[RMDB]
RNA sequence: GGGAACGACUCGAGUAGAGUCGAAAAGAUGAUAGUUGCACUGUCCUUAGACAGUGCGUUUGAAUCUCACUUCAAACAGUGUCCUUCUAAGGACACUGUGAAGAGUGAGCUCUUCACGGCUAUCAUAGAUAGGUUUGUGAUUCGUUGCAGAUCUAUCAAAAGAAACAACAACAACAAC
Reactivity to DMS in 0.01 (KOAc 150mM, MgCl2 10mM, bicine 150mM(pH8.5), 24C), signal-to-noise 9, nucleotides 027 to 126: g010a030u000g000a010u000a000g010u000u020g010c000a010c000u000g000u010c000c300u030u050a120g000a010c000a000g010u000g010c000g000u020u010u010g010a030a000u040c000u000c000a000c000u000u000c020a070a300a020c000a000g010u000g000u000c000c000u000u040c240u030a150a050g010g010a010c000a000c000u000g000u000g000a160a240g000a010g000u000g010a010g000c010u000c000u000u000c010a030c300g010g000c000u000a000u000c000a000u000a060
Reactivity to 2A3 in 0.01 (KOAc 150mM, MgCl2 10mM, bicine 150mM(pH8.5), 24C), signal-to-noise 9, nucleotides 027 to 126: g170a010u020g000a000u000a000g030u050u270g010c000a000c000u000g010u020c020c060u060u050a090g000a000c000a000g000u000g000c000g000u010u010u040g030a010a120u300c000u000c000a000c000u040u050c010a060a030a010c000a000g000u000g000u000c010c000u060u230c100u200a120a060g000g000a000c000a000c000u000g000u000g000a060a020g010a000g000u000g000a000g000c000u000c000u000u000c010a000c010g020g000c000u000a000u000c000a000u020a030